[RMDB]
RNA sequence: GGGAACGACUCGAGUAGAGUCGAAAAUGUGUGCGUGUAUUGGGUGCUGCUGCUGCUUCUUCUGGGAUUGUGUGGAGUUGUGGCGGUCUUUUGAGCCGAAGAGUGUGGAAUUGCGACUCCUCACGGACUCCAUCCACUGAUUCGUCAGUGGAUGGAGAAAAGAAACAACAACAACAAC
Reactivity to DMS in 0.01 (KOAc 150mM, MgCl2 10mM, bicine 150mM(pH8.5), 24C), signal-to-noise 2, nucleotides 027 to 126: u000g000u010g010u010g030c060g030u000g030u020a100u010u000g010g010g020u010g020c040u000g010c050u000g000c040u000g010c020u000u000c040u000u010c060u000g010g000g000a120u000u000g010u010g000u000g010g000a080g000u000u000g020u010g000g040c040g000g040u000c010u010u000u010u010g000a150g000c030c010g000a070a080g000a060g000u020g040u010g010g000a110a110u000u000g010c050g000a020c020u000c010c020u000c040a040c030g010g020a180
Reactivity to 2A3 in 0.01 (KOAc 150mM, MgCl2 10mM, bicine 150mM(pH8.5), 24C), signal-to-noise 2, nucleotides 027 to 126: u110g070u000g020u010g050c000g010u070g030u090a100u030u120g110g000g010u060g040c020u000g010c010u020g010c040u030g020c030u040u020c000u120u050c040u070g050g070g070a140u090u110g040u010g000u020g050g010a020g000u030u000g030u040g040g020c010g000g020u030c010u090u160u070u150g060a050g000c010c020g010a050a030g100a040g070u140g020u090g070g100a120a100u100u180g000c010g010a010c000u000c000c000u000c000a020c020g010g010a020
Structure probing data (DMS and 2A3) for a 177-nucleotide construct.
DMS adducts were read by reverse transcription with MarathonRT.
It was measured as part of the RMDB library OK2TST.
For 2A3 the reverse transcriptase was SuperScript II with manganese.
The RNA was probed in 150 mM KOAc, 10 mM MgCl2 and 150 mM bicine (pH 8.5) at 24 C.
For DMS, 3,644 sequencing reads were counted.